Source: RMDB library TTRDEL, as collected in RNAgym. An RNA of 177 nucleotides, treated with 2A3 and DMS and read out base by base. The 2A3 profile rests on 6,076 reads. For DMS, 3,574 sequencing reads were counted. For 2A3 the reverse transcriptase was SuperScript II with manganese. The reactions ran in a buffer of 150 mM KOAc, 10 mM MgCl2 and 150 mM bicine (pH 8.5), at 24 C.
RNA sequence: GGGAACGACUCGAGUAGAGUCGAAAAGAUAUGGAUGUGGGACAUGCUCGGACAUCGGAAACGAUGUCUGAGCAACAGCCCAAUCCUAAGUCAAAGUGCUAUCCCAAGUUCGCUUGGGAUAGCACAAUCUCCUUGGAUAGUUCGCUAUCCAAGGAGAAAAAGAAACAACAACAACAAC
Reactivity to 2A3 in 0.01 (KOAc 150mM, MgCl2 10mM, bicine 150mM(pH8.5), 24C), signal-to-noise 3, nucleotides 027 to 126: g040a000u080a050u140g030g010a030u060g100u170g300g000g000a030c070a160u070g000c020u010c000g010g000a010c010a000u000c000g040g020a130a040a020c010g000a000u000g010u000c000u010g000a010g010c010a000a000c000a000g010c000c000c000a000a010u000c000c000u010a110a020g080u020c040a120a090a040g010u000g000c020u010a010u000c010c010c010a000a000g010u020u080c250g010c220u020u020g000g000g000a010u010a000g000c010a000c000a000a000
Reactivity to DMS in 0.01 (KOAc 150mM, MgCl2 10mM, bicine 150mM(pH8.5), 24C), signal-to-noise 3, nucleotides 027 to 126: g000a030u010a300u000g000g000a000u000g020u030g020g000g000a040c030a150u000g000c000u000c010g000g010a010c000a010u000c010g020g000a090a060a190c000g010a010u000g000u000c000u000g010a000g000c000a000a020c260a130g000c000c000c000a050a010u000c000c000u000a070a130g010u010c030a100a100a120g000u000g010c010u000a000u000c000c000c000a000a020g010u000u020c230g020c010u000u000g000g000g000a000u000a000g000c000a000c000a010a040